[RMDB]
RNA sequence: GGGAACGACUCGAGUAGAGUCGAAAAAAGCCAAAGCUAGUGGUACUGCUAAUCAACAGCAGAUUAAGCAACUAGAAAAGGCUUGUAAUAUUGCUAAAUCAGCUUAUGAGAGAGAUCGUGCCGUUGCGGAGCAGCUAUGGUUCGCCAUAGCUGCUCCAAAAGAAACAACAACAACAAC
Reactivity to DMS in 0.01 (KOAc 150mM, MgCl2 10mM, bicine 150mM(pH8.5), 24C), signal-to-noise 1, nucleotides 027 to 126: a010a040g000c000c020a000a280a300g000c000u010a000g000u000g000g050u000a120c000u000g010c000u000a080a090u020c300a180a150c200a010g000c000a030g010a070u000u010a130a160g040c010a060a020c000u000a010g020a020a030a100a300g000g000c000u020u000g000u000a030a010u000a110u020u000g010c050u000a030a050a040u000c140a000g000c040u000u000a080u010g000a070g010a100g060a030g000a080u000c050g020u000g010c000c060g030u000u000g010c190
Structure probing data (DMS) for a 177-nucleotide construct. The data come from the RNA Mapping Database (RMDB), library OK2TRN. Conditions: 150 mM KOAc, 10 mM MgCl2 and 150 mM bicine (pH 8.5), 24 C. For DMS, 576 sequencing reads were counted.